Structure probing data (2A3 and DMS) for a 177-nucleotide construct.
For DMS, 6,428 sequencing reads were counted.
Conditions: 150 mM KOAc, 10 mM MgCl2 and 150 mM bicine (pH 8.5), 24 C.
For 2A3 the reverse transcriptase was SuperScript II with manganese.
RNA sequence: GGGAACGACUCGAGUAGAGUCGAAAAGAUAUGGAGUGUGAGAGCUAGCUGGUGGUCGGAAACGACCACGCAGCUUGGACCUCUACACUCCUAAGUCAAAACCAAAUGAUGUUCGCAUCAUUUGGAAGUAGUCUUUUAGGUUCGCCUAAAAGACUACAAAAGAAACAACAACAACAAC
Reactivity to 2A3 in 0.01 (KOAc 150mM, MgCl2 10mM, bicine 150mM(pH8.5), 24C), signal-to-noise 4, nucleotides 027 to 126: g000a000u030a010u130g000g010a010g000u010g000u090g110a090g000a010g070c120u180a030g010c000u020g010g020u020g000g020u000c010g000g000a050a030a020c010g010a000c000c000a000c040g130c010a000g000c010u010u070g010g090a040c010c010u020c010u020a010c000a000c000u000c000c000u000a020a010g030u010c010a010a010a100a210c000c000a010a020a000u010g000a000u010g060u140u170c300g010c150a000u000c000a010u020u010u000g010g020a040a030
Reactivity to DMS in 0.01 (KOAc 150mM, MgCl2 10mM, bicine 150mM(pH8.5), 24C), signal-to-noise 4, nucleotides 027 to 126: g010a030u000a300u000g000g000a020g030u000g000u000g010a020g000a050g000c080u010a020g040c000u010g020g020u000g000g010u010c000g010g010a070a070a180c010g020a010c000c000a010c000g000c000a010g000c000u000u010g010g000a100c300c000u000c000u000a020c000a010c000u010c000c000u000a000a050g020u010c030a110a120a130a280c010c000a000a000a000u000g000a010u000g010u000u010c300g020c000a010u000c000a010u000u000u010g000g010a020a100
For DMS the reverse transcriptase was MarathonRT.
Source: RMDB library TTRDES, as collected in RNAgym.